Conditions: 150 mM KOAc, 10 mM MgCl2 and 150 mM bicine (pH 8.5), 24 C. This 177-nucleotide RNA was probed chemically with DMS. For DMS the reverse transcriptase was MarathonRT.
RNA sequence: GGGAACGACUCGAGUAGAGUCGAAAAUACAUGAUACUAAAAGUUUACGGGCUGGAAGACGUAGCGUAGGCAGGCCUCCUACUAGGUAGACCGACGAUCUGGUAAAGGUCACGGGAAGAGCAUGGAAUAAUUACCCACGGUUCGCCGUGGGUAAUUAAAAAGAAACAACAACAACAAC
Reactivity to DMS in 0.01 (KOAc 150mM, MgCl2 10mM, bicine 150mM(pH8.5), 24C), signal-to-noise 1, nucleotides 027 to 126: u010a120c090a120u000g000a100u000a080c130u010a020a040a090a150g000u000u000u000a060c100g000g020g040c040u020g050g010a070a080g010a040c060g010u000a040g010c040g030u000a070g010g030c140a030g020g010c020c010u000c090c050u000a050c070u010a020g020g000u000a040g000a150c050c050g000a090c080g000a040u010c000u000g000g010u010a070a080a020g000g010u000c010a120c070g010g000g020a060a060g000a040g020c030a040u000g000g000a110a110